RNA sequence: GGGAACGACUCGAGUAGAGUCGAAAACUAGGUUAUAUACAGGACUGUGUGACCUGGAUUUGAAGGAAUCAGCUCGGCGUUGAUAUAUUCAUGUUGGUGCUCGCAGUUCGCCGUGGCAGAAUGGUGCCUGCAGGUGACUAUUCGUAGUCACCUGCAGAAAAGAAACAACAACAACAAC
Reactivity to 2A3 in 0.01 (KOAc 150mM, MgCl2 10mM, bicine 150mM(pH8.5), 24C), signal-to-noise 1, nucleotides 027 to 126: c000u010a010g060g070u160u030a130u000a040u000a110c080a050g100g170a140c080u000g010u000g010u000g070a020c000c000u080g050g000a080u190u060u170g080a060a010g080g050a010a030u010c000a000g010c030u050c060g210g000c000g000u000u030g030a000u030a070u030a050u090u110c030a020u050g030u030u090g000g000u000g040c040u000c030g000c040a000g000u070u000c010g000c020c000g000u010g070g000c050a000g070a170a140u110g110g070u110g020c000
Reactivity to DMS in 0.01 (KOAc 150mM, MgCl2 10mM, bicine 150mM(pH8.5), 24C), signal-to-noise 1, nucleotides 027 to 126: c040u000a010g000g010u000u000a030u000a050u080a060c070a140g000g010a010c110u000g010u000g000u000g000a050c030c000u010g000g000a150u000u010u040g030a070a070g010g020a200a020u030c010a120g000c030u000c100g030g030c070g000u080u080g000a030u020a120u000a210u000u000c060a040u000g000u020u000g000g090u000g000c040u000c050g000c030a050g000u010u000c010g010c080c080g030u000g010g000c010a080g000a110a100u060g000g020u020g000c000